[RMDB]
RNA sequence: GGGAACGACUCGAGUAGAGUCGAAAAGCUGCGCUCCCCUGCUAGAACCUCCAAACAAGCUCAAGGUCCAUUUGUAGGAGAACGUAGGGUAGUCAAGCUUCCAAGACUGCAGACACAUCCAAGUGAGUACUCUAUAGGUGUUCGCACCUAUAGAGUAAAAAGAAACAACAACAACAAC
Reactivity to 2A3 in 0.01 (KOAc 150mM, MgCl2 10mM, bicine 150mM(pH8.5), 24C), signal-to-noise 9, nucleotides 027 to 126: g010c020u040g010c030g010c050u030c010c010c000c000u000g010c010u010a030g040a110a070c010c000u010c020c020a060a140a100c030a110a060g040c030u090c120a090a080g120g040u050c070c020a090u050u040u100g040u050a020g000g020a020g010a050a010c030g000u020a060g000g000g010u000a010g010u030c050a040a020g000c000u040u010c000c000a030a040g060a040c040u070g020c030a020g020a070c020a010c010a070u050c050c010a130a010g040u040g100a030g050
Reactivity to DMS in 0.01 (KOAc 150mM, MgCl2 10mM, bicine 150mM(pH8.5), 24C), signal-to-noise 7, nucleotides 027 to 126: g020c010u000g000c240g010c020u000c030c000c000c000u010g020c030u000a080g010a180a170c060c000u000c030c010a060a090a100c120a090a120g010c080u010c130a100a090g000g010u010c090c080a200u020u010u010g020u000a130g000g000a030g000a100a080c170g010u000a040g000g000g010u000a030g010u000c090a160a070g000c010u000u000c040c010a070a090g000a040c030u020g000c040a040g000a070c050a050c060a100u020c030c040a080a080g000u010g000a080g000
Structure probing data (2A3 and DMS) for a 177-nucleotide construct. For 2A3 the reverse transcriptase was SuperScript II with manganese. For DMS the reverse transcriptase was MarathonRT. The data come from the RNA Mapping Database (RMDB), libraries RFM100 and RFMREP.